[RMDB]
RNA sequence: GGGAACGACUCGAGUAGAGUCGAAAAUGGAGCGUCGGGCCCCAGCAGUCCGUGGAAUUCACCCUCUUACCGCUUCUCCACACUCCUUCCCCCCUGCGGGCUCCCCCCAUAAGAUGACGAGGACCCCUAAGACACGACUUCGGUCGUGUCAAAAGAAACAACAACAACAAC
Reactivity to DMS in 0.01 (KOAc 150mM, MgCl2 10mM, bicine 150mM(pH8.5), 24C), signal-to-noise 1, nucleotides 027 to 129: u030g020g000a090g000c000g020u020c080g040g010g020c040c040c040c070a080g030c110a070g010u020c100c060g050u010g030g020a150a070u010u090c070a120c000c050c000u000c000u000u000a000c110c020g000c090u020u010c020u020c010c000a020c140a150c100u020c020c070u000u000c030c100c010c000c040c050u030g030c000g000g000g000c030u000c000c020c010c030c040c000a090u090a080a040g040a050u020g000a070c070g000a030g060g000a210c000c020c000c000u030a040a020
Reactivity to 2A3 in 0.01 (KOAc 150mM, MgCl2 10mM, bicine 150mM(pH8.5), 24C), signal-to-noise 2, nucleotides 027 to 129: u100g040g000a000g010c020g040u000c010g020g010g000c000c000c000c000a000g050c000a040g040u040c040c020g050u060g040g050a060a080u040u060c050a100c030c000c030u000c030u080u150a110c090c000g080c070u080u010c000u040c020c000a040c010a050c080u040c020c000u050u090c010c010c000c000c000c010u020g000c040g010g000g000c000u030c020c000c000c000c030c000a030u080a000a060g050a020u070g030a000c010g040a030g000g020a020c000c000c000c000u020a100a000
Annotation: Structure probing data (DMS and 2A3) for a 170-nucleotide construct. The reactions ran in a buffer of 150 mM KOAc, 10 mM MgCl2 and 150 mM bicine (pH 8.5), at 24 C. High 2A3 reactivity points to a flexible backbone, as in loops and unpaired stretches. For DMS the reverse transcriptase was MarathonRT. Source: RMDB library 15KLIB, as collected in RNAgym. For 2A3 the reverse transcriptase was SuperScript II with manganese.